Chemical mapping of a 177-nucleotide RNA with DMS and 2A3. The RNA was probed in 150 mM KOAc, 10 mM MgCl2 and 150 mM bicine (pH 8.5) at 24 C. It was measured as part of the RMDB library M2PK90. DMS adducts were read by reverse transcription with MarathonRT.

RNA sequence: GGGAACGACUCGAGUAGAGUCGAAAAUAAGAGCAUGUACGAAUCACGAUAUGAGAGUUCCUGGUGAAUCCCCGGUACAAGGAAAGGUAUUAAUCUCCCACUGCGUUCCCUUGCAGUAGGGAUAUAACUCCAAUAUGGUAUUCGUACCAUAUUGGAGAAAAGAAACAACAACAACAAC
Reactivity to DMS in 0.01 (KOAc 150mM, MgCl2 10mM, bicine 150mM(pH8.5), 24C), signal-to-noise 8, nucleotides 027 to 126: u010a070a100g010a070g010c070a050u000g010u000a060c050g000a070a060u000c050a050c070g010a140u000a090u010g010a090g010a220g010u000u000c010c010u010g000g020u010g000a070a090u000c030c020c020c040g020g000u000a040c070a060a050g000g000a040a060a060g000g010u000a050u010u000a060a080u010c110u000c000c000c010a040c020u000g000c000g000u000u000c020c020c010u000u000g010c000a010g010u000a070g020g000g000a020u000a020u010a080a160
Reactivity to 2A3 in 0.01 (KOAc 150mM, MgCl2 10mM, bicine 150mM(pH8.5), 24C), signal-to-noise 5, nucleotides 027 to 126: u160a040a030g060a010g050c070a060u070g020u110a050c040g030a070a050u070c060a010c080g060a070u060a080u300g090a100g010a010g070u040u020c010c010u040g050g000u060g060a100a100u090c010c010c010c000g000g030u020a030c020a010a020g070g000a090a040a030g070g000u090a070u120u100a170a090u020c030u000c020c000c010a010c000u000g000c010g030u040u020c000c000c000u000u030g000c000a010g000u120a130g000g000g000a000u010a000u000a010a000